[RMDB]
RNA sequence: GGGAACGACUCGAGUAGAGUCGAAAAGCCCCCGUCUUCGGACGGGGGCAAUUAACGGUCGGCGCAUGCAGCUAGUCGAAAAUGCUGCUCGACCUUUUCCUAAAAUACGACCCUUCGGGGUCGUAAAUCUAUGUUGAUGAUUCGUCAUCAACAUAGAAAAAGAAACAACAACAACAAC
Reactivity to DMS in 0.01 (KOAc 150mM, MgCl2 10mM, bicine 150mM(pH8.5), 24C), signal-to-noise 2, nucleotides 027 to 126: g000c000c010c000c000c000g040u000c000u000u010c210g020g010a020c000g030g000g000g000g030c010a000a010u000u000a060a060c180g000g020u000c010g030g000c070g010c070a000u010g020c100a200g000c080u000a150g010u020c100g000a070a060a110a060u000g010c000u010g020c000u010c010g010a010c010c000u000u000u000u000c000c000u000a060a060a100a150u010a000c020g000a000c000c000c010u000u010c140g020g030g000g000u000c000g020u000a010a040a090
Reactivity to 2A3 in 0.01 (KOAc 150mM, MgCl2 10mM, bicine 150mM(pH8.5), 24C), signal-to-noise 2, nucleotides 027 to 126: g030c000c000c000c060c000g050u050c060u100u090c240g100g010a010c010g020g040g010g010g060c000a000a000u000u010a010a020c040g010g000u010c000g040g000c120g000c100a060u200g010c000a020g040c030u100a050g300u270c060g080a080a060a020a050u090g000c010u010g000c030u030c050g010a000c000c000u000u050u000u000c000c000u000a000a050a010a010u070a000c000g000a000c000c020c000u020u120c280g040g020g000g000u000c000g010u000a010a000a000
Notes
This 177-nucleotide RNA was probed chemically with DMS and 2A3. Source: RMDB library M2PK50, as collected in RNAgym. Conditions: 150 mM KOAc, 10 mM MgCl2 and 150 mM bicine (pH 8.5), 24 C.